[RMDB]
RNA sequence: GGGAACGACUCGAGUAGAGUCGAAAAGAGGAAGAAACACUCCAGAGGCAUCAGAGGCUCAAGAAAAUGCCUAGAAUGAAGUUCAGACCAUCAAGAAGUCCCCGGUGGCUCAGGCACAUUCACUGUUUGUUCAUUCCUCUGACAGUCACGGACAGCAGGUACGUGGUGCUUUCGAGCACCACGUACCAAAAGAAACAACAACAACAAC
Reactivity to 2A3 in 0.01 (KOAc 150mM, MgCl2 10mM, bicine 150mM(pH8.5), 24C), signal-to-noise 1, nucleotides 027 to 156: g000a000g000g020a030a030g070a000a050a000c020a000c040u070c040c110a040g010a020g100g000c020a030u070c040a020g040a090g150g050c060u050c170a030a050g080a100a150a000a000u040g050c020c000u040a020g030a020a040u050g050a120a040g010u030u060c060a060g020a110c050c000a020u040c080a090a080g100a130a010g130u060c020c040c020c020g060g000u010g000g020c050u000c110a050g070g000c030a000c000a050u020u000c020a020c020u030g030u020u050u000g020u080u060c070a110u100u000c000c000u030c010u010g010a010c030a020g070u110c030a030c190g020g000a050c040a000g000c010a010

Chemical mapping of a 207-nucleotide RNA with 2A3. The data come from the RNA Mapping Database (RMDB), library OK3TST.